RNA sequence: GGGAACGACUCGAGUAGAGUCGAAAAGUCGAGCGAGUGCGCUCGACAGCGCACAGUGGUGCGCAUACUUAUUCUAAGGACUACAGAUUAGAAUAAGAGAAGUAUUUCAAUGUAUAAGGGUGGAUAUAUUGAAAUACAACACCACCCAAGUAGUCCAGCACCUGGCUACGUUCGCGUAGCCAGGUGCAAAAGAAACAACAACAACAAC
Reactivity to 2A3 in 0.01 (KOAc 150mM, MgCl2 10mM, bicine 150mM(pH8.5), 24C), signal-to-noise 1, nucleotides 027 to 156: g000u000c010g000a000g000c000g050a120g230u150g140c040g010c010u010c020g000a000c000a000g020c010g000c030a010c000a100g230u220g090g030u000g040c020g000c000a030u060a030c000u000u000a000u020u000c010u010a010a020g030g000a020c000u000a000c010a030g170a200u030u020a000g010a050a000u010a000a000g020a010g060a120a000g010u000a000u000u010u000c000a020a010u000g020u040a010u010a050a020g000g000g010u010g000g060a000u020a000u000a000u000u020g010a000a000a000u010a000c000a000a040c030a030c000c000a010c000c000c020a000a010g010u000a000g010u000c030c000a000
Overview:
Chemical mapping of a 207-nucleotide RNA with 2A3. For 2A3 the reverse transcriptase was SuperScript II with manganese.